This 177-nucleotide RNA was probed chemically with 2A3. The 2A3 profile rests on 915 reads.
RNA sequence: GGGAACGACUCGAGUAGAGUCGAAAACUAAUUCAGGAGUUUCCUUGAUUAGAUUAGAUAGAACUAAAAUAUCCUGAGCCAUUGUCAUAGCCACAUAGACUAUUCUAUCCUCUUCCUCUAGAUAGUCGACCUACCUCGAGUUCGCUCGAGGUAGGUCAAAAGAAACAACAACAACAAC
Reactivity to 2A3 in 0.01 (KOAc 150mM, MgCl2 10mM, bicine 150mM(pH8.5), 24C), signal-to-noise 2, nucleotides 027 to 126: c010u040a000a000u090u030c060a030g020g070a100g070u110u150u150c000c000u030u120g030a030u010u050a040g060a080u110u050a020g040a040u130a080g040a110a000c070u080a050a000a030a180u200a130u020c010c010u010g030a000g050c040c000a080u110u060g040u060c020a010u000a060g020c000c000a100c010a070u110a050g040a010c010u050a030u140u010c000u000a100u060c000c070u040c040u120u010c020c000u000c000u030a060g010a130u020a030g030u080c020